This 207-nucleotide RNA was probed chemically with 2A3. Reactivities are given for positions 27 through 156. The data come from the RNA Mapping Database (RMDB), library OK3TST. Values are in units of 0.01, from 0 to 300, in steps of 10.
RNA sequence: GGGAACGACUCGAGUAGAGUCGAAAAUGUGAAUCAAAAAUUAAUUCACUGCCAAGCAGUUUUUAACAGAAAAUGUUGUGGGACUCUCCUAAUACAUGUCAUUUAGAGUGCUUACUUAUUUCCAUAACAAUGCCUUUUAAGUGAUUUUUUUUAAGAACCAUGUAACAUUCUUCGGAAUGUUACAUGGAAAAGAAACAACAACAACAAC
Reactivity to 2A3 in 0.01 (KOAc 150mM, MgCl2 10mM, bicine 150mM(pH8.5), 24C), signal-to-noise 2, nucleotides 027 to 156: u140g000u000g020a000a000u060c060a050a210a150a120a110u180u180a060a080u030u000c000a000c020u010g080c030c010a080a020g010c020a030g010u020u060u080u190u300a130a080c090a030g090a040a070a070a070u030g020u070u040g030u090g080g000g040a090c030u030c040u080c070c010u090a110a070u070a110c100a100u140g040u070c000a040u040u040u010a000g000a000g000u190g040c000u070u040a060c000u060u070a060u070u300u070c150c020a040u020a050a000c000a000a140u050g010c000c000u080u040u040u130a010a010g000u000g000a000u060u120u020u030u000u040u050u140a140a130g070a020a010